Chemical mapping of a 177-nucleotide RNA with DMS and 2A3.
The DMS profile rests on 2,113 reads.
RNA sequence: GGGAACGACUCGAGUAGAGUCGAAAAGAUAUGGACUUAAGCGAUAAGCUCGUAUCGGAAACGAUACGGAGCUUUUGACGCUUGUGUCCUAAGUCAAAACCCGUAGGGGGUUCGCCCCCUACGGGAAGUACGUAUCCUUCUUCGGAAGGAUACGUACAAAAGAAACAACAACAACAAC
Reactivity to DMS in 0.01 (KOAc 150mM, MgCl2 10mM, bicine 150mM(pH8.5), 24C), signal-to-noise 1, nucleotides 027 to 126: g000a020u000a060u010g000g000a040c010u000u000a000a000g010c000g030a080u000a030a020g030c000u000c000g010u000a000u000c000g000g010a020a020a080c000g010a020u000a000c010g020g000a010g030c000u000u000u000u010g010a290c030g010c000u000u000g000u000g000u000c000c000u000a000a080g000u000c020a130a090a130a160c000c010c000g010u000a010g000g020g010g010g000u000u010c200g010c000c020c000c000c000u010a000c010g010g010g000a000a060
Reactivity to 2A3 in 0.01 (KOAc 150mM, MgCl2 10mM, bicine 150mM(pH8.5), 24C), signal-to-noise 2, nucleotides 027 to 126: g010a000u050a010u070g000g000a000c000u090u210a020a000g010c020g120a150u030a300a030g010c010u010c000g030u000a000u000c010g000g060a060a010a000c000g000a000u020a000c090g030g080a000g010c040u060u020u060u130g030a010c030g000c000u000u010g020u010g010u000c000c010u000a040a020g010u020c000a010a030a170a240c000c010c000g000u010a000g000g000g020g000g020u050u050c170g090c000c000c000c020c000u020a010c010g000g010g000a000a000
The 2A3 profile rests on 2,938 reads. DMS (dimethyl sulfate) methylates the pairing face of unpaired adenines and cytosines.